Chemical mapping of a 207-nucleotide RNA with 2A3. The reactions ran in a buffer of 150 mM KOAc, 10 mM MgCl2 and 150 mM bicine (pH 8.5), at 24 C.

[RMDB]
RNA sequence: GGGAACGACUCGAGUAGAGUCGAAAAGUGAAAACUCCUUCUCUCGCAAUGUGUAACUCAUGAUUCUCAUGACCCCUGGUUGGAGAGAUCCGGACUAGGAGCCAGGGGGCCUCUGAUUCUGCCAGCCAAAACUGUCGUAAGUUCGCUUACGACAGAACAGUUCUAUGUGCUUCGGCACAUAGAACUGAAAAGAAACAACAACAACAAC
Reactivity to 2A3 in 0.01 (KOAc 150mM, MgCl2 10mM, bicine 150mM(pH8.5), 24C), signal-to-noise 1, nucleotides 027 to 156: g080u080g060a000a000a070a000c020u100c010c020u060u000c010u030c020u010c050g050c030a040a120u080g050u010g010u240a050a030c030u020c000a020u050g020a160u260u080c050u040c060a050u090g070a170c000c020c010c020u010g030g060u020u080g120g000a060g000a020g000a050u030c050c050g020g080a050c090u090a040g000g030a020g020c010c010a000g000g000g000g000g000c000c010u090c010u000g060a070u030u010c000u030g060c000c020a030g160c000c000a130a000a100a090c030u000g010u000c010g020u000a010a010g010u060u100c100g000c050u030u000a000c000g010a000c000a000g000a000a000